[RMDB]
An RNA of 207 nucleotides, treated with DMS and 2A3 and read out base by base. The 2A3 profile rests on 3,580 reads. Conditions: 150 mM KOAc, 10 mM MgCl2 and 150 mM bicine (pH 8.5), 24 C.
RNA sequence: GGGAACGACUCGAGUAGAGUCGAAAAUCUUCGCAGCCCGUUUCCUGCUGAAGCCUUGUACCCCAGUCUACCCGUGCGUCUUCACUGAUGCGGUAGGCAACACUGUCCAUGUGCUGAGAGGUCCCAAGAGACAAUCAGCAGCCGCCUCACCGCGGUCCUGGAUAAAGAUGUUCGCAUCUUUAUCCAGAAAAGAAACAACAACAACAAC
Reactivity to DMS in 0.01 (KOAc 150mM, MgCl2 10mM, bicine 150mM(pH8.5), 24C), signal-to-noise 1, nucleotides 027 to 156: u000c020u000u000c030g050c010a050g040c050c020c110g030u000u000u000c060c000u000g000c050u000g010a080a080g010c050c040u000u010g010u010a060c030c000c030c010a240g020u000c000u000a070c020c000c060g020u020g040c020g010u000c010u040u010c160a150c110u020g000a050u010g010c030g030g000u000a000g010g010c020a080a030c040a090c040u000g000u000c050c080a130u000g030u000g060c010u030g000a080g010a190g030g010u000c010c020c010a180a140g010a080g040a040c030a080a190u000c000a020g030c000a110g010c010c000g040c000c020u000c250a110c040c030g020c030g020g040u000c080
Reactivity to 2A3 in 0.01 (KOAc 150mM, MgCl2 10mM, bicine 150mM(pH8.5), 24C), signal-to-noise 4, nucleotides 027 to 156: u050c020u070u040c030g010c040a030g010c020c020c050g000u020u040u030c010c010u000g000c040u100g020a020a010g030c000c060u050u070g090u120a110c010c010c000c010a020g020u010c010u010a030c010c020c060g170u070g060c010g040u030c030u150u150c120a160c300u090g010a030u040g000c000g000g010u010a010g010g010c010a040a010c080a010c040u140g070u110c050c030a110u120g020u030g050c030u030g010a030g010a040g070g290u040c050c040c030a130a030g060a030g010a060c010a020a090u010c000a000g000c000a020g010c010c020g000c000c020u060c030a060c020c040g000c000g000g000u010c000